[RMDB]
RNA sequence: GGGAACGACUCGAGUAGAGUCGAAAACUUACAGAAGAUAACGCUUCUAACCGUCAGAAAAUACAUGAAGCUGCUGAUAAGAUUCAUUAUGCCCUUACAAGUGUUCCUGGAAUCAGCUCGGGGAAAAACACUAUGCCUUAUUCGUAAGGCAUAGUGUAAAAGAAACAACAACAACAAC
Reactivity to 2A3 in 0.01 (KOAc 150mM, MgCl2 10mM, bicine 150mM(pH8.5), 24C), signal-to-noise 2, nucleotides 027 to 126: c010u020u040a020c030a040g080a080a000g050a220u100a220a050c060g020c030u010u000c010u030a070a100c050c030g070u070c050a020g170a160a150a030a050u200a050c070a070u070g010a010a010g010c010u030g010c010u010g020a090u030a080a020g020a040u030u030c020a020u040u140a020u160g030c000c000c030u020u070a050c040a100a090g010u010g030u120u000c000c000u010g030g080a020a060u060c010a020g040c030u020c030g000g010g000g030a040a010a070a000
Reactivity to DMS in 0.01 (KOAc 150mM, MgCl2 10mM, bicine 150mM(pH8.5), 24C), signal-to-noise 5, nucleotides 027 to 126: c050u000u000a090c120a060g020a140a070g010a140u010a060a110c180g010c030u000u010c010u010a100a110c120c060g000u010c130a080g000a080a060a090a080u010a060c110a060u010g010a030a030g020c020u010g020c040u010g000a090u000a030a060g010a120u000u000c040a050u010u000a090u010g010c030c010c020u000u020a090c130a070a050g010u000g010u000u000c010c000u000g020g010a070a080u000c060a050g020c050u000c060g020g000g010g020a060a060a060a080
This 177-nucleotide RNA was probed chemically with 2A3 and DMS. Values cover nucleotides 27 to 126. Source: RMDB library OK2TST, as collected in RNAgym. For DMS the reverse transcriptase was MarathonRT. 2A3 adducts were read by reverse transcription with SuperScript II with manganese.